[RMDB]
RNA sequence: GGGAACGACUCGAGUAGAGUCGAAAAAGGAUAUCCAUUUGGAACCCACUUCCGAUGUAACAACCGAGAAAUUUCUAGCGACCUUUGCUCGCGGUUGUCCUCAGCAGGUCCAUUCGGAUAAUGGUAAAUGCGAUACGUAGUUCGCUACGUAUCGCAUAAAAGAAACAACAACAACAAC
Reactivity to 2A3 in 0.01 (KOAc 150mM, MgCl2 10mM, bicine 150mM(pH8.5), 24C), signal-to-noise 5, nucleotides 027 to 126: a000g180g010a060u080a040u050c020c000a040u040u030u180g060g020a110a110c020c010c020a030c000u090u030c040c020g010a020u070g040u100a090a020c010a050a010c020c020g040a060g150a150a130a080u160u200u020c060u050a030g030c000g040a090c020c060u090u160u280g070c030u040c030g020c020g000g000u010u010g010u070c010c020u050c010a080g030c030a010g010g000u010c010c000a040u110u140c050g070g000a040u070a110a030u080g080g020u080a090a150
Reactivity to DMS in 0.01 (KOAc 150mM, MgCl2 10mM, bicine 150mM(pH8.5), 24C), signal-to-noise 3, nucleotides 027 to 126: a020g010g030a170u020a060u000c040c000a070u000u010u010g030g020a070a090c060c040c070a120c170u000u000c050c030g010a030u030g000u000a080a060c050a060a070c040c010g030a080g030a090a150a130u020u010u010c070u020a080g000c080g010a100c160c130u000u000u010g000c060u000c050g000c110g030g020u010u000g020u000c010c040u000c100a080g040c170a100g010g050u020c020c010a030u000u000c060g000g000a050u030a010a020u020g000g010u010a050a060